[RMDB]
This 177-nucleotide RNA was probed chemically with DMS and 2A3. The 2A3 profile rests on 3,259 reads.

RNA sequence: GGGAACGACUCGAGUAGAGUCGAAAAACUCGGUCAUUACCACAGCUCAAACCUGCUUUGGGACUCCCUCCCACAAAACUGGCUCCGGAUCAGGGAACACUACCAAACCAACAGCAGUCAAAUCAGGCCGAAUCAGAUUAUUCGUAAUCUGAUUCGGAAAAGAAACAACAACAACAAC
Reactivity to DMS in 0.01 (KOAc 150mM, MgCl2 10mM, bicine 150mM(pH8.5), 24C), signal-to-noise 3, nucleotides 027 to 126: a060c010u000c030g030g040u000c030a040u000u010a130c000c010a160c210a110g040c060u000c040a040a100a100c090c060u010g010c050u030u010u000g000g010g010a180c050u010c000c010c010u010c010c010c010a090c210a060a040a080a070c070u010g010g010c020u000c050c040g020g020a100u000c110a070g020g030g010a020a080c140a080c070u000a050c070c020a040a070a090c060c020a030a050c120a060g020c040a010g010u000c070a050a060a100u030c080a110g000g030
Reactivity to 2A3 in 0.01 (KOAc 150mM, MgCl2 10mM, bicine 150mM(pH8.5), 24C), signal-to-noise 2, nucleotides 027 to 126: a010c020u010c000g000g010u010c020a040u040u110a040c030c000a030c040a040g050c010u040c090a060a110a120c020c030u040g050c070u070u050u030g010g010g060a080c030u040c020c010c000u000c000c020c000a030c020a010a110a010a050c030u040g050g000c010u020c010c020g060g000a090u070c020a040g070g000g000a050a000c030a010c030u080a070c000c040a100a000a000c000c010a000a030c010a030g010c000a000g060u050c030a080a050a030u090c040a030g090g040
The RNA was probed in 150 mM KOAc, 10 mM MgCl2 and 150 mM bicine (pH 8.5) at 24 C. For DMS, 1,700 sequencing reads were counted.